RNA sequence: GGGAACGACUCGAGUAGAGUCGAAAAGAUAUGGAUUUACCAGACUUGGAUUUAGUAGCCACUUCGGAAACGAAUGCUACUUGUCAGUCUGCGUAAAUCCUAAGUCAAAUCCAUGUUCGCAUGGAAACACCCCACAAUACUUCGGUAUUGUGGGGUGAAAAGAAACAACAACAACAAC
Reactivity to DMS in 0.01 (KOAc 150mM, MgCl2 10mM, bicine 150mM(pH8.5), 24C), signal-to-noise 2, nucleotides 027 to 126: g010a040u000a300u000g000g000a010u000u000u000a010c000c020a020g000a010c000u000u010g030g010a010u000u000u000a010g010u000a020g000c010c050a030c090u010u000c000g000g010a120a070a190c010g000a050a020u010g030c010u000a010c000u000u000g000u000c000a030g010u000c000u010g010c220g000u000a000a000a000u000c000c000u000a010a090g000u000c020a070a110a120u000c010c000a000u000g000u000u020c210g020c020a010u000g000g000a040a090a280
Reactivity to 2A3 in 0.01 (KOAc 150mM, MgCl2 10mM, bicine 150mM(pH8.5), 24C), signal-to-noise 3, nucleotides 027 to 126: g050a010u040a040u140g000g000a000u000u010u010a020c010c000a000g010a010c050u160u270g230g010a060u300u300u220a030g000u010a000g030c040c010a100c050u020u020c010g030g030a080a090a050c000g040a020a040u300g010c000u010a000c000u000u010g030u000c000a000g010u020c000u000g000c050g000u010a000a000a000u020c000c010u010a060a020g010u020c060a110a040a070u010c000c010a010u010g050u050u070c300g000c070a010u000g000g060a030a030a020
Overview
An RNA of 177 nucleotides, treated with DMS and 2A3 and read out base by base. In probing experiments dimethyl sulfate is read out at A N1 and C N3, which are open when not base-paired. Conditions: 150 mM KOAc, 10 mM MgCl2 and 150 mM bicine (pH 8.5), 24 C. 2A3 adducts were read by reverse transcription with SuperScript II with manganese. Source: RMDB library TTRDEL, as collected in RNAgym.